[RMDB]
RNA sequence: GGGAACGACUCGAGUAGAGUCGAAAACACAUGCCAUCAUAUCGGUUAAGAUCUCUUAACUCUGAUGGCUUUCGAGUUAUGUGGUGCAUUGAAGCUCUCCCUUCAAUUCAACGUACCGUUCCGUCAAGCACGGAACAUGAUUCGUCAUGUUCCGUGCAAAAGAAACAACAACAACAAC
Reactivity to 2A3 in 0.01 (KOAc 150mM, MgCl2 10mM, bicine 150mM(pH8.5), 24C), signal-to-noise 2, nucleotides 027 to 126: c080a000c010a060u170g020c030c000a000u000c010a010u080a060u250c060g010g000u010u000a010a020g060a300u110c210u050c000u170u000a000a000c000u020c030u070g010a010u010g000g000c000u000u000u000c010g010a010g000u090u030a060u150g130u150g040g030u020g000c030a010u040u000g010a050a020g000c030u000c030u090c090c010c000u000u020c040a050a030u050u000c030a050a000c020g020u020a020c000c070g000u010u000c020c000g120u100c090a010a030
Reactivity to DMS in 0.01 (KOAc 150mM, MgCl2 10mM, bicine 150mM(pH8.5), 24C), signal-to-noise 3, nucleotides 027 to 126: c120a090c210a040u020g000c000c000a020u010c020a070u000a160u000c240g000g000u000u000a010a000g000a290u030c300u000c000u010u000a000a000c000u000c110u000g010a010u000g000g000c000u010u000u010c050g010a050g030u000u000a080u000g030u000g000g020u020g000c030a040u000u000g000a030a050g000c100u000c090u000c100c080c000u010u000c090a040a050u000u000c030a020a040c020g020u000a020c050c050g010u000u010c010c010g000u000c080a060a080